[RMDB]
RNA sequence: GGGAACGACUCGAGUAGAGUCGAAAAUCUAUCUUCGGAUAGAAUAUAGGGGUCGGUUCAACAGCGACUGUGUUCUGAUGACCCUGAAGCCUCCACGGGCAAGGAACAUGGUCGACAUGAACCGACGGAGGCACCCGAUAUCGUACUUCGGUACGAAUGAGUAAUAAUGUUUCGACAUUAUUACUCAAAAAGAAACAACAACAACAAC
Reactivity to DMS in 0.01 (KOAc 150mM, MgCl2 10mM, bicine 150mM(pH8.5), 24C), signal-to-noise 2, nucleotides 027 to 156: u000c000u000a010u010c010u000u010c300g030g000a020u010a000g000a060a120u000a120u000a250g010g030g040g040u000c030g020g030u000u000c030a030a070c160a120g010c030g010a040c010u000g030u000g010u000u000c010u000g010a190u000g010a110c110c010c020u000g020a070a150g000c060c020u000c020c030a190c280g000g030g000c040a090a300g020g010a030a080c000a020u000g030g010u000c020g000a070c020a300u010g020a040a050c000c020g040a000c050g000g010a060g040g020c020a110c000c020c000g000a100u000a050u000c000g020u000a020c010u000u010c300g040g000u000a010c000g010a030a220
Reactivity to 2A3 in 0.01 (KOAc 150mM, MgCl2 10mM, bicine 150mM(pH8.5), 24C), signal-to-noise 5, nucleotides 027 to 156: u000c000u000a000u000c000u010u040c220g080g000a020u020a010g060a070a030u280a040u110a100g070g010g010g010u010c010g000g020u000u010c020a090a090c050a200g180c030g010a000c000u010g000u000g000u010u000c020u030g230a300u280g180a300c020c000c000u020g040a050a030g020c000c020u060c050c030a040c080g010g000g030c070a100a100g000g000a000a000c000a010u020g000g010u010c010g130a090c010a020u020g000a000a000c000c000g000a000c000g000g000a010g010g020c030a050c020c000c010g030a060u040a070u170c000g000u000a000c000u040u050c240g070g000u000a000c000g000a020a090